[RMDB]
RNA sequence: GGGAACGACUCGAGUAGAGUCGAAAAUGAACCCGAUUGGGGUGUGCGCGAUGGCAGCGCCGAUGGCCGCAUUGGCGACCGCUAACAGAUUGUCCGGCCGGUCCGGGAAGUCGCUGAAGCCGUCGUAUGGGCAUCCAUAUUUCGAUAUGGAUGCCCAAAAAGAAACAACAACAACAAC
Reactivity to DMS in 0.01 (KOAc 150mM, MgCl2 10mM, bicine 150mM(pH8.5), 24C), signal-to-noise 1, nucleotides 027 to 126: u020g020a150a140c030c030c000g000a220u010u000g050g000g030g000u000g010u000g010c030g030c000g010a090u010g010g010c020a160g020c030g010c050c020g010a010u000g000g020c070c110g020c090a160u010u020g020g000c000g010a020c010c170g000c100u010a120a080c130a180g010a090u000u000g010u010c030c000g000g000c040c190g000g010u010c000c000g000g000g010a070a100g010u000c000g030c020u000g000a080a130g010c020c050g020u000c020g010u010a110
Chemical mapping of a 177-nucleotide RNA with DMS. The DMS profile rests on 812 reads. The RNA was probed in 150 mM KOAc, 10 mM MgCl2 and 150 mM bicine (pH 8.5) at 24 C. Reactivities are given for positions 27 through 126. Source: RMDB library OK2TST, as collected in RNAgym.